RNA sequence: GGGAACGACUCGAGUAGAGUCGAAAAGUUAAGCACCUUUCCAGACAGGACCGAUGAAGAGUGGGAGGGGAAAAGAGUCUCGGGGAAGACAGGAAAGGCUCGCAGGGUGAGCAGCCAUGGUGCGCUAGCUCCUUAAGAGAUUCGUCUCUUAAGGAGCAAAAGAAACAACAACAACAAC
Reactivity to DMS in 0.01 (KOAc 150mM, MgCl2 10mM, bicine 150mM(pH8.5), 24C), signal-to-noise 6, nucleotides 027 to 126: g020u020u010a110a120g010c060a060c010c000u000u000u010c020c000a140g010a140c150a100g020g000a070c060c070g020a110u000g010a070a080g000a120g010u000g000g000g000a120g000g000g010g000a050a040a080a110g010a100g010u000c050u000c080g000g000g000g010a120a070g010a060c100a080g000g000a060a090a070g010g010c070u000c090g020c080a080g010g000g020u010g000a080g020c040a070g010c040c040a060u010g020g010u000g010c040g000c150u000a100
Reactivity to 2A3 in 0.01 (KOAc 150mM, MgCl2 10mM, bicine 150mM(pH8.5), 24C), signal-to-noise 6, nucleotides 027 to 126: g020u050u080a100a030g010c010a030c010c000u020u050u030c030c020a070g040a120c040a050g060g050a060c030c050g060a110u150g080a070a090g080a040g080u140g000g030g050a200g020g010g000g030a010a100a030a050g080a020g060u020c030u040c060g020g000g010g030a060a040g050a030c060a030g040g020a080a070a010g030g000c040u070c090g030c040a020g070g030g070u090g020a030g000c030a010g000c020c000a040u100g030g000u050g020c030g000c040u030a050